[RMDB]
RNA sequence: GGGAACGACUCGAGUAGAGUCGAAAAGAAGCACUUCUCUUGAGGGCUAUUGACAGGUGGGAAUGUGCCCACCUCCUUGGGUCUCUGGUUUUCAUGUCAUACUUGCAAAUCAGUGACAGUUUAAACUUGGGGCAAUCACUUAGCAAGUCUAUUGAGAAUGCACGAUUUACUUCGGUAAAUCGUGCAUAAAAGAAACAACAACAACAAC
Reactivity to 2A3 in 0.01 (KOAc 150mM, MgCl2 10mM, bicine 150mM(pH8.5), 24C), signal-to-noise 1, nucleotides 027 to 156: g100a020a020g040c010a030c050u060u000c100u050c010u020u030g080a090g000g000g020c030u040a060u030u120g070a110c080a030g040g000u040g000g080g090a050a220u240g000u230g180c000c000c000a000c000c000u000c000c010u020u070g000g050g000u000c010u010c020u050g000g140u080u000u090u050c040a020u020g200u100c000a060u060a300c040u030u020g030c030a010a020a120u020c000a040g000u000g000a010c040a070g040u100u160u150a130a100a090c040u000u030g000g000g020g040c000a020a020u010c010a020c090u000u040a010g020c010a070a060g030u000c010u070a110u020u180g000a070g000a040
The record gives the reactivity of an RNA of 207 nucleotides to 2A3. The 2A3 profile rests on 455 reads. The reactions ran in a buffer of 150 mM KOAc, 10 mM MgCl2 and 150 mM bicine (pH 8.5), at 24 C.